[RMDB]
RNA sequence: GGGAACGACUCGAGUAGAGUCGAAAACGGUCUUGCUUCAGCUUAUAGGGCGAAUUCCUUUGAUGUACCUACAUUCUGCGCAAACCGUUCUGCAAUGUGUAAUUGGUGCUUGAUUAGCCAAGAUUCCGGAGCGAUGUGUUCGCACAUCGCAAAAGAAACAACAACAACAAC
Reactivity to 2A3 in 0.01 (KOAc 150mM, MgCl2 10mM, bicine 150mM(pH8.5), 24C), signal-to-noise 6, nucleotides 027 to 129: c000g000g010u020c060u070u000g000c000u160u170c000a000g000c030u010u010a040u040a080g010g000g000c070g090a120a110u120u200c040c000u080u070u250g110a090u110g020u170a250c000c020u000a000c000a040u010u040c020u000g000c010g000c010a000a000a000c000c000g010u000u030c040u010g000c030a020a120u060g050u020g010u080a100a120u050u040g020g000u040g020c070u130u090g050a130u150u120a020g000c000c010a040a010g030a120u090u020c030c000g040g020a080
Reactivity to DMS in 0.01 (KOAc 150mM, MgCl2 10mM, bicine 150mM(pH8.5), 24C), signal-to-noise 6, nucleotides 027 to 129: c050g020g010u040c130u010u030g000c050u040u070c040a000g030c090u020u010a080u050a030g000g010g000c060g000a090a050u000u000c090c250u020u040u040g020a150u050g000u080a000c000c020u010a050c060a040u000u000c020u020g000c300g000c040a000a010a020c020c030g000u020u030c040u030g020c070a090a030u030g030u000g020u040a120a050u000u030g020g030u050g020c160u070u020g000a000u050u030a200g060c060c020a100a010g010a000u020u010c030c050g000g000a300
Conditions: 150 mM KOAc, 10 mM MgCl2 and 150 mM bicine (pH 8.5), 24 C. Chemical mapping of a 170-nucleotide RNA with 2A3 and DMS. For DMS the reverse transcriptase was MarathonRT. The DMS profile rests on 15,441 reads. High 2A3 reactivity points to a flexible backbone, as in loops and unpaired stretches. Source: RMDB library 15KLIB, as collected in RNAgym. For 2A3 the reverse transcriptase was SuperScript II with manganese.